[RMDB]
RNA sequence: GGGAACGACUCGAGUAGAGUCGAAAAAUAUCUUAGUGAUACUCCAGUUAACUCUAUACUUUCCCUGCAAUACGCUAUUCGCCUUAGAUGUAUCUGGGUGGCUGCUCCACUAAAGCCCGGGAAUAUGGUGACACUCUGUAUUCGUACAGAGUGUCACAAAAGAAACAACAACAACAAC
Reactivity to DMS in 0.01 (KOAc 150mM, MgCl2 10mM, bicine 150mM(pH8.5), 24C), signal-to-noise 2, nucleotides 027 to 126: a120u040a050u000c010u000u020a060g000u010g030a070u000a060c080u000c080c010a050g020u000u000a020a080c040u010c030u000a100u020a150c030u000u020u000c010c020c020u000g010c170a040a000u010a050c100g030c050u000a140u000u040c060g010c030c040u000u040a010g010a140u020g000u010a120u010c000u040g020g000g030u020g000g000c030u000g000c050u000c030c050a000c170u030a060a140a140g010c020c010c020g000g000g000a110a050u000a040u000g030
Reactivity to 2A3 in 0.01 (KOAc 150mM, MgCl2 10mM, bicine 150mM(pH8.5), 24C), signal-to-noise 4, nucleotides 027 to 126: a010u130a020u050c050u090u110a090g010u060g090a040u040a100c000u020c010c010a010g000u040u070a060a050c020u000c030u050a030u040a160c040u100u040u020c010c000c000u000g010c000a020a110u030a110c040g020c040u030a060u030u070c020g040c010c010u090u100a030g020a150u130g100u130a050u060c020u020g020g010g010u010g050g030c000u020g010c000u030c050c010a040c040u050a090a050a070g000c020c000c030g050g030g080a050a040u170a050u090g100

The record gives the reactivity of an RNA of 177 nucleotides to DMS and 2A3. It was measured as part of the RMDB libraries RFM100 and RFMREP. For DMS the reverse transcriptase was MarathonRT. For 2A3 the reverse transcriptase was SuperScript II with manganese. The RNA was probed in 150 mM KOAc, 10 mM MgCl2 and 150 mM bicine (pH 8.5) at 24 C. The 2A3 profile rests on 2,211 reads.